[RMDB]
RNA sequence: GGGAACGACUCGAGUAGAGUCGAAAAUCAGCCAAAUUUGGUUUACAUACCCCAACCACUGCUACUCCUAGGGUAGUUUCUAAUCCUUCUAAUACUGCAGGUGUGAGUAAACCGGGCAUGUAUAUGACGAUAUCAUCCGGUUCGCCGGAUGAUAUCGAAAAGAAACAACAACAACAAC
Reactivity to DMS in 0.01 (KOAc 150mM, MgCl2 10mM, bicine 150mM(pH8.5), 24C), signal-to-noise 1, nucleotides 027 to 126: u020c150a100g020c010c020a030a230a180u010u000u000g000g000u000u000u000a080c060a100u010a300c040c000c010c050a050a200c060c060a040c140u030g010c040u010a050c120u000c010c060u000a080g000g010g020u000a020g000u000u020u000c060u010a000a030u000c020c010u000u020c100u010a060a080u040a040c110u000g010c000a100g020g030u010g000u020g000a140g010u000a020a070a000c020c030g020g010g020c050a040u010g000u000a100u000a160u010g000a300
Reactivity to 2A3 in 0.01 (KOAc 150mM, MgCl2 10mM, bicine 150mM(pH8.5), 24C), signal-to-noise 1, nucleotides 027 to 126: u000c000a010g060c010c020a020a220a080u210u130u220g040g010u060u100u020a020c040a070u070a060c000c000c000c000a010a050c020c020a040c080u060g060c000u040a050c020u010c010c050u060a040g020g040g030u000a070g030u030u000u060c050u060a120a020u030c000c060u060u060c000u010a100a090u060a160c050u060g000c010a090g020g060u010g020u020g050a160g060u090a000a000a000c020c030g010g110g000c030a090u100g110u050a040u020a030u200g110a060

Chemical mapping of a 177-nucleotide RNA with DMS and 2A3. For 2A3, 766 sequencing reads were counted. For DMS, 740 sequencing reads were counted. DMS adducts were read by reverse transcription with MarathonRT.